The record gives the reactivity of an RNA of 177 nucleotides to DMS and 2A3.
RNA sequence: GGGAACGACUCGAGUAGAGUCGAAAAGUGAAUAAGUUCAACAAGACAAUAUUCUCAAAAAAUGUUGAGGAUAAUGCAAGUGAAGAUGAAAUUCAUGAUGAUGAUUCAGUGAGACCAAGAGUGGGUGCCCGUAGGAGUAUUUCGAUACUCCUACGGGAAAAGAAACAACAACAACAAC
Reactivity to DMS in 0.01 (KOAc 150mM, MgCl2 10mM, bicine 150mM(pH8.5), 24C), signal-to-noise 2, nucleotides 027 to 126: g020u000g010a050a000u000a050a300g000u020u000c010a240a060c040a060a200g010a160c020a010a050u000a010u000u000c000u000c000a010a040a100a100a090a150u010g000u020u000g020a010g010g030a000u000a030a040u000g000c070a020a290g000u000g000a060a070g000a050u000g020a050a070a040u010u000c030a000u000g000a050u010g010a040u000g010a060u000u000c070a050g030u000g000a060g010a080c070c080a070a060g000a120g010u000g000g000g000u000g020
Reactivity to 2A3 in 0.01 (KOAc 150mM, MgCl2 10mM, bicine 150mM(pH8.5), 24C), signal-to-noise 1, nucleotides 027 to 126: g000u000g000a010a030u070a140a000g050u070u100c010a030a030c010a050a030g130a050c010a050a000u010a030u040u010c000u000c030a050a010a020a020a020a160u300g020u100u020g010a010g050g010a010u020a030a020u060g010c050a010a210g070u030g070a000a050g030a030u080g060a220a110a080u060u010c010a010u050g040a110u080g020a010u010g020a070u120u120c010a010g080u040g090a000g030a020c040c010a040a030g130a000g090u150g000g050g040u050g000
The reactions ran in a buffer of 150 mM KOAc, 10 mM MgCl2 and 150 mM bicine (pH 8.5), at 24 C. High DMS reactivity at an A or C suggests that its Watson-Crick edge is free.